[RMDB]
RNA sequence: GGGAACGACUCGAGUAGAGUCGAAAAUAGCAGGACAUAGCCGUUAUGCGCGAAGCGGUGUAGCGUCACUUUGAUGGCGGUCCUAUGAAUUGAUGCAAGGUGUGGAGCGACCUUAAACAGUUCUGGUUUGACGGCUUUCAGUUCGCUGAAAGCCGAAUCCUGUGAACAACUUCGGUUGUUCACAGGAAAAAGAAACAACAACAACAAC
Reactivity to 2A3 in 0.01 (KOAc 150mM, MgCl2 10mM, bicine 150mM(pH8.5), 24C), signal-to-noise 2, nucleotides 027 to 156: u180a030g070c030a000g000g010a000c010a010u080a030g000c000c000g000u040u040a070u150g090c080g010c050g030a020a000g050c040g000g020u050g020u020a030g030c020g050u010c040a040c120u210u150u170g150a190u040g010g000c030g010g000u000c000c000u030a070u050g040a010a050u080u090g070a060u120g060c010a050a010g030g000u020g010u080g070g010a010g030c010g000a010c000c010u070u100a090a040a000c030a020g020u020u000c040u060g060g010u030u090u150g060a010c000g000g000c000u000u000u010c000a020g020u000u060c080g010c130u010g010a000a000a000g010c000c000g000a000a000

Chemical mapping of a 207-nucleotide RNA with 2A3. Conditions: 150 mM KOAc, 10 mM MgCl2 and 150 mM bicine (pH 8.5), 24 C. For 2A3, 1,280 sequencing reads were counted.